This 177-nucleotide RNA was probed chemically with 2A3 and DMS. In probing experiments dimethyl sulfate is read out at A N1 and C N3, which are open when not base-paired. DMS adducts were read by reverse transcription with MarathonRT. The DMS profile rests on 8,325 reads.
[RMDB]
RNA sequence: GGGAACGACUCGAGUAGAGUCGAAAAGGGCAUAUCUUCGGAUAUGCCCAAACGUCGAAAAGGAAAAGUCGCAUGCGUCGAUCGAACAACGUCGCAUGCCACAAACUCGGAGGUUCGCCUCCGAGAACCUAAAUCUACAGUUCGCUGUAGAUUUAGGAAAAGAAACAACAACAACAAC
Reactivity to 2A3 in 0.01 (KOAc 150mM, MgCl2 10mM, bicine 150mM(pH8.5), 24C), signal-to-noise 6, nucleotides 027 to 126: g010g000g000c010a000u010a000u010c020u050u060c180g030g000a000u000a000u010g000c000c000c000a010a000a000c010g090u070c050g070a040a040a040a050g070g060a060a060a020a050g040u030c030g020c000a000u010g000c000g010u010c000g040a150u090c120g050a080a060c050a060a060c070g010u000c000g000c000a010u000g000c000c000a020c000a000a110a010c000u000c000g000g010a010g030g010u060u070c210g070c030c000u000c000c000g000a000g000a000a010
Reactivity to DMS in 0.01 (KOAc 150mM, MgCl2 10mM, bicine 150mM(pH8.5), 24C), signal-to-noise 5, nucleotides 027 to 126: g020g010g010c000a000u000a000u010c000u000u010c180g030g010a020u000a000u000g010c000c000c000a000a020a050c110g010u000c050g000a040a040a050a070g000g020a070a070a090a110g010u000c300g010c000a010u000g010c010g020u000c000g010a070u000c120g000a090a090c250a100a060c010g010u000c000g010c010a000u000g000c000c070a020c060a050a090a150c010u000c000g000g010a010g000g020u010u020c200g020c010c000u000c000c000g000a000g010a040a070